An RNA of 207 nucleotides, treated with 2A3 and read out base by base. 2A3 adducts were read by reverse transcription with SuperScript II with manganese. The reactions ran in a buffer of 150 mM KOAc, 10 mM MgCl2 and 150 mM bicine (pH 8.5), at 24 C. The 2A3 profile rests on 1,304 reads.
[RMDB]
RNA sequence: GGGAACGACUCGAGUAGAGUCGAAAAAGCACUGGUACGAUACGUCGUACCAGUGCAGUCGUUGGGAUGGAACGCAAUUAAAUACAUGUGUGACGUGUAUUUGCGAACGACGUAAUUAUUUUCCAAAAUCACGCUAUCGUGUUCGCACGAUAGCGAAGCUACCUGAAGACUUCGGUCUUCAGGUAGCAAAAGAAACAACAACAACAAC
Reactivity to 2A3 in 0.01 (KOAc 150mM, MgCl2 10mM, bicine 150mM(pH8.5), 24C), signal-to-noise 3, nucleotides 027 to 156: a000g000c000a020c000u000g000g020u000a000c010g000a020u000a020c260g180u000c000g020u020a000c000c000a000g000u000g000c000a000g000u010c030g000u020u020g140g010g060a100u080g180g110a120a010c030g000c000a010a050u220u110a120a100a020u020a010c000a010u020g120u040g180u210g250a100c050g020u000g010u010a010u000u040u090g020c000g010a030a000c000g010a010c000g040u050a060a100u140u120a060u030u080u010u000c010c000a020a000a000a110u170c080a020c050g000c000u000a000u000c000g000u020g060u080u040c120g000c110a000c000g000a000u000a000g000c000g000a000a000